[RMDB]
RNA sequence: GGGAACGACUCGAGUAGAGUCGAAAAGGCACCGCCACAGUCCUGCUGAGUCUGGGCCCAGGAUGGGGUUGUCUGUAUUCUUCUCUCCACCCUCCUCAGACCCCACCUCCCGGCUGGACAGCUGGGCUCAAGGCCAGGGCUGAGCCAGGGGGCCAGCCUGAUUCCUAUAGUUCGCUAUAGGAAUCAGAAAAGAAACAACAACAACAAC
Reactivity to 2A3 in 0.01 (KOAc 150mM, MgCl2 10mM, bicine 150mM(pH8.5), 24C), signal-to-noise 2, nucleotides 027 to 156: g020g000c020a030c100c040g130c010c020a070c020a040g020u010c000c000u020g040c080u080g070a040g040u010c000u020g040g000g000c010c060c000a000g030g010a150u080g010g030g000g030u090u070g070u020c060u030g110u050a230u110u100c070u140u040c050u000c000u090c070c030a120c030c010c000u060c000c070u020c010a050g050a160c060c000c000c020a040c030c000u030c030c010c030g020g040c040u040g020g070a040c010a070g020c010u000g000g000g000c010u000c010a050a020g040g000c000c000a000g020g010g000c000u010g000a000g000c020c010a030g030g010g000g020g000c020c010a010g000c000
Reactivity to DMS in 0.01 (KOAc 150mM, MgCl2 10mM, bicine 150mM(pH8.5), 24C), signal-to-noise 2, nucleotides 027 to 156: g040g010c020a050c030c020g000c040c000a300c040a070g000u000c000c000u000g020c090u020g010a090g020u000c040u010g010g000g000c050c040c000a070g010g020a080u000g010g010g000g050u000u020g010u000c050u010g010u010a130u000u000c080u010u010c010u000c020u000c020c010a090c030c020c010u000c040c000u000c040a170g000a110c000c020c020c010a070c020c020u000c000c010c020g010g000c040u010g010g030a170c100a080g000c020u020g000g020g030c100u000c050a010a100g030g010c090c000a070g030g000g000c020u000g010a130g000c000c010a170g030g020g010g040g000c030c010a080g010c090